[RMDB]
RNA sequence: GGGAACGACUCGAGUAGAGUCGAAAAGGACAGCAUGCAGGUGGCGGAUCUCCACCCAGAGAUCUUUGUGGAGGCGGCUGCAGCGCGAGAACGCAUGCGCGCCGCGCGGCUGCUGCAAGAGCCGCCCCAUGGAUGGAAUCUUCGGAUUCCAUCCAUGAAAAGAAACAACAACAACAAC
Reactivity to DMS in 0.01 (KOAc 150mM, MgCl2 10mM, bicine 150mM(pH8.5), 24C), signal-to-noise 5, nucleotides 027 to 126: g010g010a090c060a100g000c040a040u010g010c080a100g020g030u000g010g020c070g010g010a030u000c010u000c010c030a140c040c040c040a180g000a070g010a030u000c030u000u000u000g020u010g010g000a210g010g000c010g000g000c000u010g010c000a030g000c010g000c020g000a080g010a100a110c060g010c030a100u010g010c150g010c010g020c060c030g000c040g020c000g010g010c010u000g020c010u000g000c050a090a080g000a100g020c010c000g010c000c010c080
Reactivity to 2A3 in 0.01 (KOAc 150mM, MgCl2 10mM, bicine 150mM(pH8.5), 24C), signal-to-noise 2, nucleotides 027 to 126: g040g030a030c020a070g010c010a040u130g050c030a010g030g060u030g040g000c040g010g020a030u000c010u000c010c000a070c010c040c020a020g020a000g000a040u050c000u060u120u110g060u060g050g040a070g030g000c010g000g000c010u020g000c010a010g010c000g000c010g010a030g010a140a040c070g040c100a070u290g070c040g000c020g040c100c010g060c030g010c000g060g000c020u030g010c000u020g000c010a020a030g050a020g150c000c010g010c010c020c010

Chemical mapping of a 177-nucleotide RNA with DMS and 2A3. It was measured as part of the RMDB library OK2TRN. The reactions ran in a buffer of 150 mM KOAc, 10 mM MgCl2 and 150 mM bicine (pH 8.5), at 24 C. Reactivities are given for positions 27 through 126. For DMS, 8,217 sequencing reads were counted.